[RMDB]
RNA sequence: GGGAACGACUCGAGUAGAGUCGAAAAGAUAUGGAUGUUGAGCAACUAGGACGAAGAACUCGGAAACGAGGGAGUCCAUUGUGUAAGCAUCCUAAGUCAAACCCAUAGUACUUCGGUACUAUGGGAAGAGCUAUUAUCCGUUCGCGGAUAAUAGCUCAAAAGAAACAACAACAACAAC
Reactivity to DMS in 0.01 (KOAc 150mM, MgCl2 10mM, bicine 150mM(pH8.5), 24C), signal-to-noise 2, nucleotides 027 to 126: g000a000u000a300u000g030g000a040u010g000u000u000g010a300g000c010a000a030c270u000a140g060g020a010c020g020a070a180g030a110a230c000u010c010g010g000a050a080a140c010g000a010g020g000g010a070g000u000c000c010a150u000u000g010u000g000u010a190a060g000c010a000u000c000c000u000a020a110g000u000c000a090a080a160c010c000c000a000u000a010g010u000a000c000u000u020c170g040g020u000a030c000u000a010u000g010g000g000a040a000
Reactivity to 2A3 in 0.01 (KOAc 150mM, MgCl2 10mM, bicine 150mM(pH8.5), 24C), signal-to-noise 2, nucleotides 027 to 126: g050a020u080a020u180g000g010a000u000g000u060u050g090a080g000c020a020a040c100u300a270g030g000a010c030g170a300a140g000a050a000c000u000c000g000g030a030a020a040c010g010a010g000g000g000a000g000u000c000c010a000u000u010g000u010g070u130a010a020g060c000a010u020c000c000u020a130a000g040u020c030a070a050a160c000c000c000a000u000a020g010u010a000c030u030u060c300g090g010u000a000c000u000a010u010g010g000g000a010a020

This 177-nucleotide RNA was probed chemically with DMS and 2A3. Source: RMDB library TTRDEL, as collected in RNAgym. The RNA was probed in 150 mM KOAc, 10 mM MgCl2 and 150 mM bicine (pH 8.5) at 24 C. Reactivities are rounded to 0.1 and cut off at 0 and 3. High DMS reactivity at an A or C suggests that its Watson-Crick edge is free.